[RMDB]
RNA sequence: GGGAACGACUCGAGUAGAGUCGAAAAUUGCAAGCCUUCGGGCUUGCAAGGUGUCGGAAUGCGGAAUAUAUAAUCCUCCGCUUAAGGAUUAUACCGUCUUAAGUGCCAGGCUGUUCGCAGCCUGGAAAACAUUAACAGUCUUCGGACUGUUAAUGUUAAAAGAAACAACAACAACAAC
Reactivity to DMS in 0.01 (KOAc 150mM, MgCl2 10mM, bicine 150mM(pH8.5), 24C), signal-to-noise 7, nucleotides 027 to 126: u000u000g010c000a020a020g010c000c000u000u010c190g030g010g030c000u000u000g010c000a000a000g010g010u010g010u010c060g000g010a110a090u010g010c020g000g010a200a090u010a220u010a030u000a030a030u000c020c010u000c200c180g010c200u010u000a070a030g010g000a010u000u000a030u000a050c060c050g000u000c100u010u000a090a100g010u010g010c000c000a010g000g000c000u000g010u000u010c190g010c010a010g010c000c000u000g000g000a010a030
Reactivity to 2A3 in 0.01 (KOAc 150mM, MgCl2 10mM, bicine 150mM(pH8.5), 24C), signal-to-noise 4, nucleotides 027 to 126: u010u010g000c000a000a000g010c000c020u050u090c270g090g010g000c000u000u000g010c000a000a000g000g020u060g030u040c060g060g140a140a050u180g020c010g000g090a130a010u220a020u010a010u000a200a010u030c000c020u030c070c030g080c090u040u090a030a010g000g000a010u010u000a020u050a060c010c000g050u080c050u100u110a140a050g050u030g140c000c000a000g000g000c010u020g020u040u060c200g000c070a000g000c000c000u000g000g000a010a000
The data come from the RNA Mapping Database (RMDB), library M2PK50. An RNA of 177 nucleotides, treated with DMS and 2A3 and read out base by base. For DMS, 11,831 sequencing reads were counted. For 2A3, 5,082 sequencing reads were counted.